[RMDB]
An RNA of 177 nucleotides, treated with DMS and 2A3 and read out base by base. The data come from the RNA Mapping Database (RMDB), libraries RFM100 and RFMREP. DMS (dimethyl sulfate) methylates the pairing face of unpaired adenines and cytosines.
RNA sequence: GGGAACGACUCGAGUAGAGUCGAAAAUGCCUAAUUCAAGGAAUUAGCGUGCCUUCAUGCUAAGGGUUUGAUAUCUGCUAAAACCCGGUGCAUUCAUCAAUGCAGGUUAAGCCAAAGGGAUGUCCCGCGUGCGAUUGCAUUUCGAUGCAAUCGCACGAAAAGAAACAACAACAACAAC
Reactivity to DMS in 0.01 (KOAc 150mM, MgCl2 10mM, bicine 150mM(pH8.5), 24C), signal-to-noise 2, nucleotides 027 to 126: u030g010c040c010u000a050a020u000u000c120a160a130g010g020a130a040u000u000a020g010c030g000u020g000c060c060u010u040c190a050u000g030c000u000a300a180g010g030g010u000u000u000g000a210u010a120u010c050u000g000c070u010a180a040a010a010c000c000c020g010g020u020g000c020a010u030u020c230a020u030c150a070a090u000g010c010a000g000g000u000u000a090a070g000c000c050a040a070a090g000g000g000a050u010g000u000c000c000c020g020
Reactivity to 2A3 in 0.01 (KOAc 150mM, MgCl2 10mM, bicine 150mM(pH8.5), 24C), signal-to-noise 3, nucleotides 027 to 126: u100g020c000c000u050a110a080u040u070c150a160a100g090g030a090a060u000u000a010g000c030g040u030g040c000c010u010u180c050a040u080g000c040u040a000a100g000g020g010u010u010u020g060a080u050a120u070c060u100g020c030u140a010a010a060a030c000c000c000g020g000u000g020c000a020u040u110c020a030u070c060a040a100u110g030c000a020g080g000u060u080a040a000g010c040c040a060a040a010g090g000g010a070u070g050u080c000c000c000g000

Background: The reactions ran in a buffer of 150 mM KOAc, 10 mM MgCl2 and 150 mM bicine (pH 8.5), at 24 C.